Structure probing data (DMS and 2A3) for a 177-nucleotide construct. 2A3 is a SHAPE reagent: it acylates the 2'-hydroxyl of flexible nucleotides of all four kinds. Source: RMDB library M2PK50, as collected in RNAgym.
[RMDB]
RNA sequence: GGGAACGACUCGAGUAGAGUCGAAAAAACAGCUGCUUCGGCAGCUGUUAACGCUCGCGGCUCGAGGCUGCACGAGCCGGACAGCAGCCAGUCCGCGAGCUAUAGCCUUGGAGUUCGCUCCAAGGAAGAGUAUCAUGCUUUUCGAAGCAUGAUACUCAAAAGAAACAACAACAACAAC
Reactivity to DMS in 0.01 (KOAc 150mM, MgCl2 10mM, bicine 150mM(pH8.5), 24C), signal-to-noise 2, nucleotides 027 to 126: a020a000c000a010g000c000u010g020c010u000u010c210g020g000c000a000g010c000u000g010u000u000a030a100c180g000c000u000c010g020c020g010g000c080u010c040g010a120g000g000c020u000g010c010a090c110g010a160g010c160c090g010g030a070c130a110g000c010a000g000c000c000a130g010u010c010c010g010c000g000a010g020c000u000a020u000a100g000c000c000u010u000g010g000a020g020u000u030c200g010c000u000c010c000a000a020g000g000a010a040
Reactivity to 2A3 in 0.01 (KOAc 150mM, MgCl2 10mM, bicine 150mM(pH8.5), 24C), signal-to-noise 2, nucleotides 027 to 126: a000a000c010a000g020c010u010g010c000u060u090c200g090g000c000a000g000c000u010g000u000u000a000a000c020g020c010u010c010g000c000g010g020c080u040c040g100a120g000g030c000u010g000c000a050c190g110a070g140c040c020g050g050a040c030a050g000c010a000g000c010c010a010g010u020c000c000g010c010g010a000g000c000u010a000u010a000g020c000c000u000u000g010g000a010g000u040u140c160g060c080u010c010c000a000a000g000g020a010a020